RNA sequence: GGGAACGACUCGAGUAGAGUCGAAAAGCACGUUUUGGGUGCUCUGACUCGUGACGGUCGCGGUCAGCCCCUGUCCGACGAUUUUUGGUUGGAUACCGUGUGCGUGGCCGUGCACCGGGCGAUAUGUCUGACCCUGCAGUGCCACCGGCGUCGGAGCAUAACCCGAAGGGUUCGCCCUUCGGGUUAUAAAAGAAACAACAACAACAAC
Reactivity to 2A3 in 0.01 (KOAc 150mM, MgCl2 10mM, bicine 150mM(pH8.5), 24C), signal-to-noise 3, nucleotides 027 to 156: g020c000a000c040g020u060u080u210u280g120g020g000u070g040c040u010c020u040g000a010c010u010c020g030u050g130a130c020g070g000u030c000g010c010g000g000u000c000a010g000c000c000c000c000u010g030u000c010c000g050a040c060g050a220u010u050u020u150u300g130g000u000u020g010g020a030u030a070c060c080g040u090g030u050g060c120g090u060g000g000c010c020g010u010g000c060a010c000c020g000g020g000c020g020a050u040a080u300g030u010c020u020g070a090c010c030c010u050g050c080a080g020u010g040c000c020a070c020c040g030g040c020g070u060c070g020g000a010g000c010
Reactivity to DMS in 0.01 (KOAc 150mM, MgCl2 10mM, bicine 150mM(pH8.5), 24C), signal-to-noise 2, nucleotides 027 to 156: g010c020a010c030g000u000u010u010u000g010g020g000u000g030c060u000c020u010g000a030c020u000c000g020u000g010a160c030g010g000u000c040g030c020g020g040u000c020a150g010c020c010c010c010u010g030u000c010c040g030a030c000g020a230u010u000u020u000u010g030g020u000u000g010g010a060u010a040c070c020g030u000g030u000g050c020g000u000g020g020c000c010g040u000g010c050a030c020c040g020g010g050c030g010a160u000a060u000g010u010c050u000g010a150c030c000c030u020g000c080a120g010u000g020c040c010a120c000c040g020g010c090g030u000c010g000g000a130g000c100
Description:
This 207-nucleotide RNA was probed chemically with 2A3 and DMS. 2A3 adducts were read by reverse transcription with SuperScript II with manganese. The RNA was probed in 150 mM KOAc, 10 mM MgCl2 and 150 mM bicine (pH 8.5) at 24 C. The data come from the RNA Mapping Database (RMDB), library OK3TST. For DMS the reverse transcriptase was MarathonRT.